The record gives the reactivity of an RNA of 177 nucleotides to DMS and 2A3. The RNA was probed in 150 mM KOAc, 10 mM MgCl2 and 150 mM bicine (pH 8.5) at 24 C.
[RMDB]
RNA sequence: GGGAACGACUCGAGUAGAGUCGAAAAUUUUCCCUCAGAUAUAGCGUAAUGAUGAGAGCCAUCUUAAACUAUGCUCUUCGGUCUUCAAGCCUGUCAUACUGACUCGUCUUGAGCGAAAAUAAGUCUGACUAGAGCCCAAGUUCGCUUGGGCUCUAGUAAAAGAAACAACAACAACAAC
Reactivity to DMS in 0.01 (KOAc 150mM, MgCl2 10mM, bicine 150mM(pH8.5), 24C), signal-to-noise 2, nucleotides 027 to 126: u020u050u000u000c000c040c000u000c020a050g010a100u020a070u010a010g000c110g040u020a040a040u020g060a040u020g000a110g020a100g020c060c020a040u020c030u010u000a030a180a120c090u010a010u000g000c080u010c150u040u000c040g000g020u050c020u060u020c020a000a080g000c000c000u000g000u000c010a110u020a150c150u020g000a070c020u000c150g010u030c010u000u040g020a030g000c010g000a000a040a130a070u000a070a080g000u010c050u000g000
Reactivity to 2A3 in 0.01 (KOAc 150mM, MgCl2 10mM, bicine 150mM(pH8.5), 24C), signal-to-noise 2, nucleotides 027 to 126: u070u000u010u000c000c000c000u000c000a000g020a000u070a030u090a130g150c100g050u060a070a070u190g010a040u070g010a030g010a060g180c060c030a040u020c080u060u140a070a060a040c080u060a050u080g010c000u000c080u100u060c010g040g010u080c050u000u050c070a010a020g010c000c000u010g020u010c020a050u030a210c150u240g030a010c000u010c000g150u050c010u000u000g020a010g000c000g050a000a070a000a020u160a060a000g040u000c000u000g030